RNA sequence: GGGAACGACUCGAGUAGAGUCGAAAACUGCUCCAUCCCGUUUCCUUGUAUCCUCAAGUUUGUCGUUUGGCGCUGUUGCGACAGGAAGGCGUCGAUCAUGCACGCACUGAGGUUGGUCGGCUUGGCGUGGCCACUAUAACUUCGGUUAUAGUGGCCAAAAAGAAACAACAACAACAAC
Reactivity to 2A3 in 0.01 (KOAc 150mM, MgCl2 10mM, bicine 150mM(pH8.5), 24C), signal-to-noise 3, nucleotides 027 to 126: c010u010g010c020u000c000c000a040u040c000c010c000g010u030u060u020c020c000u080u090g100u060a140u110c010c020u080c040a110a080g050u050u110u080g110u070c020g010u000u050u100g030g020c000g020c020u030g070u150u110g070c080g070a050c040a020g070g080a110a030g090g000c020g030u020c010g020a050u090c020a040u090g080c040a020c070g020c010a030c060u030g000a020g060g070u030u050g060g010u020c010g020g000c020u020u060g010g020c030g070
Reactivity to DMS in 0.01 (KOAc 150mM, MgCl2 10mM, bicine 150mM(pH8.5), 24C), signal-to-noise 2, nucleotides 027 to 126: c040u030g000c050u000c010c000a080u030c010c010c000g010u020u010u020c000c000u070u030g030u030a080u000c010c010u000c080a090a070g000u000u030u000g000u030c070g000u000u000u020g000g000c100g000c030u020g080u010u010g000c030g000a060c100a060g010g010a130a180g000g000c010g010u010c000g030a060u020c100a130u030g020c100a040c100g000c050a090c050u000g000a060g020g020u000u000g020g000u020c010g010g010c130u000u040g010g000c100g030